The record gives the reactivity of an RNA of 207 nucleotides to 2A3. It was measured as part of the RMDB library M2RFPK. The RNA was probed in 150 mM KOAc, 10 mM MgCl2 and 150 mM bicine (pH 8.5) at 24 C. 2A3 adducts were read by reverse transcription with SuperScript II with manganese. As a SHAPE reagent, 2A3 marks flexible, mostly unpaired nucleotides at the ribose 2'-OH.

RNA sequence: GGGAACGACUCGAGUAGAGUCGAAAAUAGCAGGACAUAGCCGUUAUGCGCGAAGCGGUGUAGCGUCACUUUGAUGGCGGUACUAUGAAUUGAUUCAAGGUGUGGAGCGACCUUAAACAGUUCUGGUUUGACGGCUUUCAGUUCGCUGAAAGCCGAAGCUUAUCCUGUUCUUCGGAACAGGAUAAGCAAAAGAAACAACAACAACAAC
Reactivity to 2A3 in 0.01 (KOAc 150mM, MgCl2 10mM, bicine 150mM(pH8.5), 24C), signal-to-noise 5, nucleotides 027 to 156: u120a010g040c050a020g030g030a040c040a060u080a010g030c000c010g040u060u060a080u190g070c060g020c030g040a060a010g030c020g010g030u070g020u050a030g070c010g010u020c030a040c110u200u150u190g170a200u070g040g000c010g020g030u040a030c030u030a050u110g030a060a040u080u060g050a050u080u110c050a060a030g010g010u020g010u070g040g000a010g000c010g000a000c010c000u070u150a080a030a010c010a010g000u000u010c010u020g060g030u040u080u110g060a030c020g000g000c000u000u000u000c010a010g010u010u090c170g000c080u000g000a000a000a000g000c000c000g000a010a000